Structure probing data (2A3 and DMS) for a 177-nucleotide construct. 2A3 adducts were read by reverse transcription with SuperScript II with manganese. The DMS profile rests on 5,231 reads. For 2A3, 1,513 sequencing reads were counted. DMS adducts were read by reverse transcription with MarathonRT. The reactions ran in a buffer of 150 mM KOAc, 10 mM MgCl2 and 150 mM bicine (pH 8.5), at 24 C.
RNA sequence: GGGAACGACUCGAGUAGAGUCGAAAACACACCGUGGUUGACUUGGCUUUCGCGAUCGUAGUCAUUGGCAACCAUGAUCAGUGAAGCGUUAUUGUUGCCUUCUAAGUCUGCCACGACUGGGUAUUCACAUAAUGGACGGUUUCGACCGUCCAUUAUGAAAAGAAACAACAACAACAAC
Reactivity to 2A3 in 0.01 (KOAc 150mM, MgCl2 10mM, bicine 150mM(pH8.5), 24C), signal-to-noise 1, nucleotides 027 to 126: c020a000c010a010c030c020g010u000g000g030u000u030g000a000c010u000u030g020g000c000u090u190u160c070g070c090g170a170u190c070g070u050a020g000u050c030a080u020u040g030g110c010a000a000c010c010a010u030g010a020u030c020a030g040u060g160a070a010g060c030g130u000u010a070u040u080g050u070u050g010c010c000u010u100c030u070a010a020g010u000c000u020g030c010c010a010c010g010a000c040u090g070g000g000u140a190u070u100c050a050
Reactivity to DMS in 0.01 (KOAc 150mM, MgCl2 10mM, bicine 150mM(pH8.5), 24C), signal-to-noise 4, nucleotides 027 to 126: c020a090c090a070c120c010g010u000g000g000u000u010g000a020c000u000u000g010g000c160u000u000u010c100g040c180g030a060u010c070g020u000a030g020u000c040a170u000u010g010g020c070a060a040c030c110a020u000g010a020u000c060a100g030u000g010a080a080g010c090g020u000u000a040u000u000g010u000u010g000c020c030u000u000c180u010a040a030g000u000c010u000g000c020c010a010c040g010a050c140u010g000g010g000u000a090u000u000c040a170